Conditions: 150 mM KOAc, 10 mM MgCl2 and 150 mM bicine (pH 8.5), 24 C. The record gives the reactivity of an RNA of 207 nucleotides to 2A3. For 2A3, 441 sequencing reads were counted. Source: RMDB library M2RFPK, as collected in RNAgym.
[RMDB]
RNA sequence: GGGAACGACUCGAGUAGAGUCGAAAAACGUCCUCGUCGUACAGAACGGUAACAUGUUUUCCGAACAUCCGCGCUUGGGUAUACGAGUAUGCACCUUACCCAACCCUCGCCAACGGGGAGGAUGGAAUUAAGGAGAGGGCCUUCGGGCCCUCUCCAAGCAGCAGAUAAGGUUCGCCUUAUCUGCUGCAAAAGAAACAACAACAACAAC
Reactivity to 2A3 in 0.01 (KOAc 150mM, MgCl2 10mM, bicine 150mM(pH8.5), 24C), signal-to-noise 1, nucleotides 027 to 156: a050c000g040u050c020c010u000c080g300u030c050g000u070a050c000a120g090a110a060c040g000g040u190a120a050c070a160u240g130u040u080u080u090c030c010g020a050a010c030a090u080c040c030g020c000g040c170u000u030g000g080g010u000a060u000a130c070g000a030g070u100a020u230g160c120a040c040c020u000u030a080c000c000c000a000a030c000c000c000u030c030g070c030c040a050a080c030g020g000g000g000a010g010g000a010u020g040g040a040a150u090u090a300a050g000g000a000g000a000g030g000g000c000c040u080u080c130g090g000g000c040c000c000u030c000u000c000c010a000a000